[RMDB]
RNA sequence: GGGAACGACUCGAGUAGAGUCGAAAAGAGGGCAGUGUCAGUGUGCAGGCUGGGUAUGCGUUGUAGCGGUGUGCUGACUGCGCAUGAACUGGCUACAGCAGUCGUCGGGUUCUGAGCUCGAUCCUGAGCGAGUGUCUUCGUUCGCGAAGGUACUCGCAAAAGAAACAACAACAACAAC
Reactivity to DMS in 0.01 (KOAc 150mM, MgCl2 10mM, bicine 150mM(pH8.5), 24C), signal-to-noise 9, nucleotides 027 to 126: g000a090g010g000g010c030a040g000u010g010u010c040a070g020u010g010u010g000c040a070g000g000c020u000g010g010g010u010a030u020g010c060g020u010u010g020u000a030g010c020g010g020u020g020u020g010c030u010g000a100c080u010g000c030g010c020a040u010g010a080a150c050u010g010g010c010u010a040c080a060g000c030a070g010u010c060g010u000c040g000g000g000u010u010c090u020g000a110g010c050u000c020g010a060u010c020c010u010g010a240
Reactivity to 2A3 in 0.01 (KOAc 150mM, MgCl2 10mM, bicine 150mM(pH8.5), 24C), signal-to-noise 9, nucleotides 027 to 126: g090a040g010g040g000c030a020g010u020g040u110c020a020g020u020g030u040g090c020a020g040g000c010u030g020g010g030u100a030u080g030c030g020u030u040g030u030a020g010c020g030g120u130g050u100g080c020u040g100a110c040u050g000c010g000c010a010u010g020a050a050c020u040g080g000c000u030a020c020a030g010c010a020g040u070c030g010u010c010g030g000g000u100u070c050u100g040a020g030c010u000c020g030a050u030c010c010u030g020a020
The data come from the RNA Mapping Database (RMDB), library OK1LIB. Chemical mapping of a 177-nucleotide RNA with DMS and 2A3. The DMS profile rests on 80,764 reads. The 2A3 profile rests on 93,814 reads. The reactions ran in a buffer of 150 mM KOAc, 10 mM MgCl2 and 150 mM bicine (pH 8.5), at 24 C. Reactivities are rounded to 0.1 and cut off at 0 and 3.